[RMDB]
RNA sequence: GGGAACGACUCGAGUAGAGUCGAAAAGCUGCUCGGCAAGGAGGCCAGCUACGCGUCGCUGCGUAUGCCCAGCGGUGAGAUCCGCCGGGUCGACGUCCGCUGCCGCGCGACCGUCGGCGAAGUGGGCCCUUUUGGGCUGGUUCGCCAGCCCAAAAGGAAAAGAAACAACAACAACAAC
Reactivity to 2A3 in 0.01 (KOAc 150mM, MgCl2 10mM, bicine 150mM(pH8.5), 24C), signal-to-noise 1, nucleotides 027 to 126: g000c010u010g000c020u030c040g090g000c080a070a050g120g030a040g090g000c090c030a030g060c040u060a040c050g020c040g040u070c010g000c070u120g020c050g030u060a100u160g030c000c040c000a010g030c000g000g000u060g050a110g020a090u020c030c010g040c030c060g130g010g030u000c020g040a060c050g020u050c010c040g000c010u060g060c080c100g000c010g060c010g000a050c050c060g030u080c050g020g030c040g000a040a020g100u170g030g040g010c030
Reactivity to DMS in 0.01 (KOAc 150mM, MgCl2 10mM, bicine 150mM(pH8.5), 24C), signal-to-noise 2, nucleotides 027 to 126: g010c030u000g010c030u000c090g010g010c110a080a130g010g000a090g000g000c070c040a080g010c070u000a040c060g000c100g000u000c210g000c090u020g000c040g010u010a060u010g030c060c080c020a040g020c010g020g000u010g020a240g010a110u010c000c010g010c070c070g000g000g000u000c050g000a080c110g000u000c040c020g000c050u000g000c160c080g000c050g030c010g000a050c060c020g000u000c020g010g000c020g020a080a050g020u020g010g020g000c010